Structure probing data (DMS and 2A3) for a 177-nucleotide construct.
Values cover nucleotides 27 to 126.
For 2A3 the reverse transcriptase was SuperScript II with manganese.
For DMS the reverse transcriptase was MarathonRT.

RNA sequence: GGGAACGACUCGAGUAGAGUCGAAAAUUAUACAUCAAGGCCGCAAGUAAAUAUGCUAAUGAUUUACCACUGCCUAGUGAUGCUUCAAUCAUUGCUUUUUCACUAUGCAUGAGCUGAUCUAAUAUAGCAGUAGUGCUAACUUCGGUUAGCACUACUGAAAAGAAACAACAACAACAAC
Reactivity to DMS in 0.01 (KOAc 150mM, MgCl2 10mM, bicine 150mM(pH8.5), 24C), signal-to-noise 4, nucleotides 027 to 126: u010u020a060u010a100c130a040u000c030a060a130g010g030c020c040g000c050a080a100g010u000a030a010a030u000a030u010g000c060u020a020a030u000g010a020u000u000u000a070c030c040a040c040u000g040c110c130u010a050g020u000g010a070u010g000c160u000u000c200a040a040u000c080a050u000u000g000c030u010u000u010u000u000c110a020c040u000a080u010g010c010a090u000g020a090g030c050u010g000a050u000c090u000a070a100u000a070u000a080g010
Reactivity to 2A3 in 0.01 (KOAc 150mM, MgCl2 10mM, bicine 150mM(pH8.5), 24C), signal-to-noise 4, nucleotides 027 to 126: u060u040a080u010a050c010a040u050c030a070a050g050g010c020c020g000c060a020a010g010u010a000a060a030u130a040u130g060c080u080a040a080u110g040a000u010u010u030a020c020c020a040c020u060g100c050c050u030a020g040u020g030a020u050g040c040u100u130c060a020a110u050c010a030u000u090g020c000u100u030u000u060u050c050a030c040u100a150u120g000c020a040u070g020a020g030c020u020g020a040u020c020u050a100a180u180a100u110a100g060